[RMDB]
RNA sequence: GGGAACGACUCGAGUAGAGUCGAAAAAUGAACUUAAAGAAACUGUUUUAAAUAAACCUUUAGAUCAAGUUCAAGUUAACCUAAGAAAGGUUUUGAAAAAUAUUGAUCCUCAAUUGCUGAAUAAACAGUCAGAAUAGAAUUUCGAUUCUAUUCUGACAAAAGAAACAACAACAACAAC
Reactivity to 2A3 in 0.01 (KOAc 150mM, MgCl2 10mM, bicine 150mM(pH8.5), 24C), signal-to-noise 1, nucleotides 027 to 126: a000u020g010a000a000c010u050u020a030a080a060g090a190a170a000c060u060g010u000u060u040u100a110a220a130u110a020a010a000c000c000u000u080u140a040g000a060u020c020a000a000g000u000u010c000a000a050g020u000u110a000a060c000c000u000a060a100g060a280a040a040g000g000u030u020u040u070g050a080a080a010a000a000u110a020u110u030g020a070u130c050c000u080c100a040a050u120u080g000c010u080g110a090a040u180a100a040a050c010a040
Reactivity to DMS in 0.01 (KOAc 150mM, MgCl2 10mM, bicine 150mM(pH8.5), 24C), signal-to-noise 1, nucleotides 027 to 126: a090u000g010a110a020c050u000u040a110a150a110g000a260a110a140c040u000g000u010u030u000u000a060a080a110u030a040a030a030c010c050u000u000u000a010g000a110u010c080a040a050g010u000u000c040a020a100g010u000u030a030a110c010c000u030a110a140g000a060a060a060g020g000u000u000u000u010g000a130a050a120a100a070u000a040u000u000g000a090u000c080c150u000c060a000a050u010u000g010c130u010g000a030a080u010a040a090a090c080a100